[RMDB]
RNA sequence: GGGAACGACUCGAGUAGAGUCGAAAAUACUGAGUUUGUGUUCUAAAGAAGAAAGUUAUCCCAGAUAGCCUUUGACCGUGACGCUUCAUCUUGGUUUUUUCCUGAUUAAAUAGUUGACUCUGGCCCAUCAGUAAGCCCAUUUCGAUGGGCUUACUGAAAAAGAAACAACAACAACAAC
Reactivity to 2A3 in 0.01 (KOAc 150mM, MgCl2 10mM, bicine 150mM(pH8.5), 24C), signal-to-noise 2, nucleotides 027 to 126: u260a020c030u060g040a020g100u000u050u020g040u090g060u010u100c060u130a000a190a000g060a040a000g060a000a040a090g020u050u040a050u100c000c010c010a050g060a060u080a000g020c000c030u100u010u200g000a080c000c000g010u050g020a030c030g040c040u020u010c070a080u030c010u050u030g060g000u030u000u000u020u020u130c060c000u070g000a150u000u190a060a020a180u150a110g040u030u110g030a000c010u010c020u000g070g000c000c020c010a020
Reactivity to DMS in 0.01 (KOAc 150mM, MgCl2 10mM, bicine 150mM(pH8.5), 24C), signal-to-noise 2, nucleotides 027 to 126: u020a040c110u020g010a110g010u000u020u020g000u010g010u030u000c030u040a080a130a120g010a080a080g000a060a070a040g000u010u030a010u020c000c080c030a140g000a070u000a110g020c050c020u000u020u000g020a230c050c030g000u020g000a060c060g050c030u020u060c020a060u000c010u000u000g000g010u000u000u000u050u050u000c010c070u030g020a060u020u000a090a060a130u020a060g010u000u030g000a130c020u000c020u000g000g000c000c000c000a080

Annotation
An RNA of 177 nucleotides, treated with 2A3 and DMS and read out base by base. The DMS profile rests on 1,763 reads. The reactions ran in a buffer of 150 mM KOAc, 10 mM MgCl2 and 150 mM bicine (pH 8.5), at 24 C. It was measured as part of the RMDB library RFM100.